Structure probing data (2A3 and DMS) for a 177-nucleotide construct. Conditions: 150 mM KOAc, 10 mM MgCl2 and 150 mM bicine (pH 8.5), 24 C. It was measured as part of the RMDB library TTRDES. The 2A3 profile rests on 35,705 reads. For DMS, 14,642 sequencing reads were counted.
[RMDB]
RNA sequence: GGGAACGACUCGAGUAGAGUCGAAAAGAUAUGGAUUCCCAGUAGGGAGCGUAUGGGUCGGAAACGACCCAGACGCGACGAUCUACGGGAAUCCUAAGUCAAACGUACGCUGUUCGCAGCGUACGAAGUCUACAAUUAUGUUCGCAUAAUUGUAGACAAAAGAAACAACAACAACAAC
Reactivity to 2A3 in 0.01 (KOAc 150mM, MgCl2 10mM, bicine 150mM(pH8.5), 24C), signal-to-noise 5, nucleotides 027 to 126: g010a010u050a020u100g000g000a000u010u000c000c010c070a010g010u010a000g010g090g120a300g030c010g000u020a020u030g000g000g010u010c020g000g020a040a050a040c010g000a010c000c000c000a000g000a000c000g020c000g010a010c030g050a120u000c010u000a000c000g020g000g000a010a000u000c000c000u010a050a000g010u010c040a150a030a080c010g000u000a000c000g000c010u020g070u090u130c300g010c190a000g000c000g000u000a000c000g000a020a020
Reactivity to DMS in 0.01 (KOAc 150mM, MgCl2 10mM, bicine 150mM(pH8.5), 24C), signal-to-noise 6, nucleotides 027 to 126: g010a030u000a300u000g010g000a010u000u000c000c000c000a180g040u000a010g000g000g020a080g040c000g020u000a020u000g010g010g020u010c000g010g000a070a060a170c000g010a010c000c000c000a000g000a010c000g010c000g010a080c300g000a070u010c000u000a020c020g010g000g000a010a000u000c000c000u000a000a080g000u000c020a090a120a300c010g000u000a000c000g020c000u000g010u000u010c260g030c000a010g000c000g010u000a000c010g000a030a070